[RMDB]
RNA sequence: GGGAACGACUCGAGUAGAGUCGAAAAUGGAAUCGGUAUAGAUUAUGUCGGGGAGACCGACAGCAUAGCUUAAAACCAUCGUGAAGUCGUUGCUUCGUGCCAUGGCUCGUGAUGACCGAAUGCUACGGACGAAGCAUUGGUUCGCCAAUGCUUCGUCAAAAGAAACAACAACAACAAC
Reactivity to DMS in 0.01 (KOAc 150mM, MgCl2 10mM, bicine 150mM(pH8.5), 24C), signal-to-noise 1, nucleotides 027 to 126: u000g000g000a050a020u020c010g020g010u000a160u040a090g010a000u050u040a050u000g110u030c000g000g040g000g040a160g040a260c000c000g010a000c040a050g000c180a110u000a050g000c120u000u020a100a090a130a010c270c000a020u010c130g000u000g010a150a000g060u000c010g060u030u000g000c000u080u040c260g000u040g000c020c080a080u010g000g000c010u030c080g000u000g000a020u020g040a070c030c020g010a170a080u000g000c000u000a030c140g000
Reactivity to 2A3 in 0.01 (KOAc 150mM, MgCl2 10mM, bicine 150mM(pH8.5), 24C), signal-to-noise 3, nucleotides 027 to 126: u170g040g050a050a040u010c000g010g000u110a100u070a120g070a050u100u010a050u160g070u090c010g000g010g030g000a100g110a100c000c000g000a000c030a000g050c030a010u080a010g000c020u030u120a070a060a010a080c050c000a000u000c010g000u000g060a100a010g010u040c010g030u000u010g000c000u070u160c190g120u220g000c000c000a000u000g010g010c000u010c020g030u050g000a010u010g000a020c010c000g010a090a070u150g000c000u040a050c110g100